An RNA of 207 nucleotides, treated with 2A3 and DMS and read out base by base. DMS adducts were read by reverse transcription with MarathonRT. The reactions ran in a buffer of 150 mM KOAc, 10 mM MgCl2 and 150 mM bicine (pH 8.5), at 24 C. The DMS profile rests on 9,204 reads. 2A3 is a SHAPE reagent: it acylates the 2'-hydroxyl of flexible nucleotides of all four kinds. It was measured as part of the RMDB library M2RFPK. Reactivities are rounded to 0.1 and cut off at 0 and 3.

RNA sequence: GGGAACGACUCGAGUAGAGUCGAAAAUACCACUGGCGGCUGCGUAUCACUCUAGGGUACGUGAUAGUGCGAUAUAAGAAGCACUGGUACAUGCCGGCAGGGACAGUUAAGAGAUGGCCGCAGUCUCAAAAGGGGUCAUUCUUCGGAAUGACCCCAAACGUAUAUUAAGUUUCGACUUAAUAUACGUAAAAGAAACAACAACAACAAC
Reactivity to 2A3 in 0.01 (KOAc 150mM, MgCl2 10mM, bicine 150mM(pH8.5), 24C), signal-to-noise 2, nucleotides 027 to 156: u120a010c000c040a050c070u040g120g070c010g000g010c000u060g000c000g000u010a000u000c020a050c240u140c120u190a240g080g000g030u020a000c000g020u010g010a050u090a060g010u000g000c000g010a040u080a040u060a300a050g130a090a010g000c000a000c020u010g000g020u080a050c030a020u100g020c000c000g050g000c000a010g000g000g020a010c040a050g030u060u090a130a020g010a000g010a060u070g050g000c050c010g040c070a000g000u000c010u030c060a040a070a010a020g020g000g000g000u010c010a000u000u010c010u010u070c120g070g000a000a000u010g000a010c000c000c020c020a000a000
Reactivity to DMS in 0.01 (KOAc 150mM, MgCl2 10mM, bicine 150mM(pH8.5), 24C), signal-to-noise 4, nucleotides 027 to 156: u000a120c010c000a110c040u000g000g030c020g010g030c010u010g000c020g010u000a020u000c000a150c080u010c140u000a170g030g020g020u000a020c040g020u000g000a150u000a020g030u000g010c000g010a160u000a170u010a180a180g010a230a280g010c000a010c000u000g020g020u010a060c080a090u000g020c010c000g030g010c030a050g000g010g010a090c050a090g000u000u000a090a160g010a090g000a080u000g010g020c060c060g010c050a240g000u000c000u000c020a040a040a130a180g000g010g060g010u000c000a010u000u000c010u000u000c300g030g000a010a020u000g010a030c000c000c000c000a000a010